[RMDB]
RNA sequence: GGGAACGACUCGAGUAGAGUCGAAAAGUAGUGCUCGAGAGGGAGGCUGUCUCGCAGUGCUUUUAGAUCUUCUGAUCUUUCCCUCCUCCAUAUCGCUUAUGCGUCAAGCGAUAGACGCAUAAUUAAAUCAUAGUCGGUAUUUCGAUACCGACUAUGAAAAAGAAACAACAACAACAAC
Reactivity to 2A3 in 0.01 (KOAc 150mM, MgCl2 10mM, bicine 150mM(pH8.5), 24C), signal-to-noise 3, nucleotides 027 to 126: g020u030a010g160u000g020c030u040c170g030a040g000a020g020g110g020a080g190g050c090u100g150u100c000u000c020g000c010a040g090u010g000c000u020u020u010u030a010g010a010u030c020u270u050c140u300g000a000u010c000u000u010u020c000c010c000u020c000c010u000c000c000a130u110a070u090c060g020c060u020u000a010u010g010c010g000u000c030a070a050g100c050g200a090u060a120g000a000c000g010c010a000u010a020a020u090u140a030a060a050
Reactivity to DMS in 0.01 (KOAc 150mM, MgCl2 10mM, bicine 150mM(pH8.5), 24C), signal-to-noise 4, nucleotides 027 to 126: g020u010a030g010u000g000c040u010c090g000a040g030a230g010g000g010a080g010g010c040u000g010u000c010u000c020g010c020a040g000u000g000c000u000u000u000u000a010g010a010u000c000u000u030c270u000g000a010u010c000u000u000u000c000c000c000u000c020c000u000c010c020a110u000a070u000c050g040c270u010u000a010u000g000c000g010u000c000a060a140g020c230g000a120u010a070g010a000c000g000c000a010u000a020a010u000u010a030a060a110